Structure probing data (2A3) for a 207-nucleotide construct. Reactivities are given for positions 27 through 156. It was measured as part of the RMDB library M2RFOK. Conditions: 150 mM KOAc, 10 mM MgCl2 and 150 mM bicine (pH 8.5), 24 C.
RNA sequence: GGGAACGACUCGAGUAGAGUCGAAAAAACGUUGCAUGAUCGUAAAACAUGCCCGGCUUACCGUGAGCCGCCUUUGAAAGAAAGGUUUACACGGACUCUGUUGCGCUACGCACGUACCUAACUUGUGAAAACGGCAUCUUGUUCGCAAGAUGCCGAAGCUCCAAUGAGAGUUCGCUCUCAUUGGAGCAAAAGAAACAACAACAACAAC
Reactivity to 2A3 in 0.01 (KOAc 150mM, MgCl2 10mM, bicine 150mM(pH8.5), 24C), signal-to-noise 1, nucleotides 027 to 156: a000a010c000g000u000u000g030c000a000u000g000a040u270c030g040u210a070a110a000a000c000a000u000g000c000c000c000g000g010c020u020u060a110c000c000g000u000g000a000g000c000c000g000c000c010u000u000u000g090a070a030a000g020a000a000a000g020g020u010u050u030a030c000a000c000g080g000a070c010u080c050u130g180u220u040g000c030g000c040u130a040c090g020c000a000c050g060u050a050c000c000u100a140a170c090u200u080g090u030g100a040a060a050a050c000g000g000c010a010u010c000u050u000g020u000u030c100g060c040a000a000g000a010u000g000c000c000g020a010a000